Record summary
An RNA of 177 nucleotides, treated with 2A3 and read out base by base.
RNA sequence: GGGAACGACUCGAGUAGAGUCGAAAAUGCAACGACGAGUCACCAGUAUUCACGUCGGCGUCCGCAUAACUUUGAUAUGGCCUUGAGAACAGACUACUUUGAUGAAUGCUGGGGCUAUCAAGGCUGGACGCAGGUCCCUCUUCGGAGGGACCUGCGUAAAAGAAACAACAACAACAAC
Reactivity to 2A3 in 0.01 (KOAc 150mM, MgCl2 10mM, bicine 150mM(pH8.5), 24C), signal-to-noise 1, nucleotides 027 to 126: u070g070c080a150a150c000g000a090c000g030a000g040u000c000a030c250c000a000g000u000a120u000u250c000a000c130g020u000c050g030g050c000g000u050c050c000g000c140a080u000a080a270c030u130u070u030g020a120u000a120u300g100g000c000c000u000u000g000a000g000a030a200c090a000g000a120c000u000a070c070u190u160u260g150a300u230g200a300a000u230g000c050u000g000g000g000g000c000u000a030u000c000a000a000g000g020c000u000g000g020
For 2A3 the reverse transcriptase was SuperScript II with manganese. The reactions ran in a buffer of 150 mM KOAc, 10 mM MgCl2 and 150 mM bicine (pH 8.5), at 24 C. It was measured as part of the RMDB library OK1LIB.